[RMDB]
RNA sequence: GGGAACGACUCGAGUAGAGUCGAAAAGAAAGAAAGGGACUUAGGGCAUGAUCCAGAGCCCAUUGUAGUCAAUGGGAGACUUUUUCCAUUGACUUCAUCGGGGUUUGGAUCAGGCCUUUACUACCAAAUUGUCAAGCACUUUCGAGUGCUUGACAAUAAAAGAAACAACAACAACAAC
Reactivity to 2A3 in 0.01 (KOAc 150mM, MgCl2 10mM, bicine 150mM(pH8.5), 24C), signal-to-noise 2, nucleotides 027 to 126: g110a060a070a000g120a040a050a030g040g010g030a040c060u090u110a030g000g010g010c000a010u020g000a000u000c000c000a000g100a130g110c040c010c000a000u000u010g010u010a000g000u020c010a000a010u010g000g020g040a080g160a270c010u290u160u020u020u000c000c000a030u000u000g010a000c010u000u030c030a030u030c020g070g060g000g020u000u000u010g000g010a000u000c000a000g020g000c000c000u000u000u000a010c000u030a070c000c030a060a100
Reactivity to DMS in 0.01 (KOAc 150mM, MgCl2 10mM, bicine 150mM(pH8.5), 24C), signal-to-noise 2, nucleotides 027 to 126: g000a050a040a080g020a070a110a140g000g010g010a180c300u010u020a010g000g000g000c000a040u000g020a020u000c000c010a010g030a000g000c010c000c000a060u000u000g010u010a030g000u030c000a000a010u000g010g000g000a000g030a210c210u060u020u030u000u000c000c020a010u000u000g010a000c000u000u000c000a000u000c140g020g000g000g000u000u000u000g020g010a000u020c000a000g000g020c000c020u000u000u000a050c080u000a270c000c030a080a050